[RMDB]
Chemical mapping of a 177-nucleotide RNA with DMS and 2A3. The 2A3 profile rests on 881 reads.
RNA sequence: GGGAACGACUCGAGUAGAGUCGAAAACACCGAUGGUGUACCGGUGGCGAGCCGAUGCGGCGGUACUCGACGCGGCCUGACCGAGCGCCUGAUCGGUGGCGUUAACCUGUACCGACAUGAGCGAUGCCACGGGCUUAGCAUUCGUGCUAAGCCCGUGAAAAGAAACAACAACAACAAC
Reactivity to DMS in 0.01 (KOAc 150mM, MgCl2 10mM, bicine 150mM(pH8.5), 24C), signal-to-noise 2, nucleotides 027 to 126: c090a090c010c010g000a100u010g010g030u000g000u000a000c040c060g020g020u000g030g020c020g020a300g030c000c000g000a060u000g030c110g000g030c020g000g020u000a100c040u000c040g000a090c040g020c030g010g000c030c010u000g020a140c070c020g000a080g000c050g010c040c020u020g010a060u010c020g000g040u000g020g010c030g010u000u030a070a100c070c010u010g010u000a060c000c020g040a160c110a070u020g030a100g020c010g000a070u000g000c100
Reactivity to 2A3 in 0.01 (KOAc 150mM, MgCl2 10mM, bicine 150mM(pH8.5), 24C), signal-to-noise 1, nucleotides 027 to 126: c170a060c030c010g150a220u110g000g040u080g010u090a070c030c020g010g020u020g030g080c000g030a020g000c020c010g020a020u120g040c080g080g000c000g000g080u100a080c020u000c030g110a080c070g040c100g050g060c020c070u000g000a080c010c020g020a020g000c010g000c020c010u070g050a020u000c030g000g000u020g040g080c010g010u030u060a100a110c010c010u030g010u000a000c020c050g010a030c090a020u130g060a090g150c040g070a010u140g020c010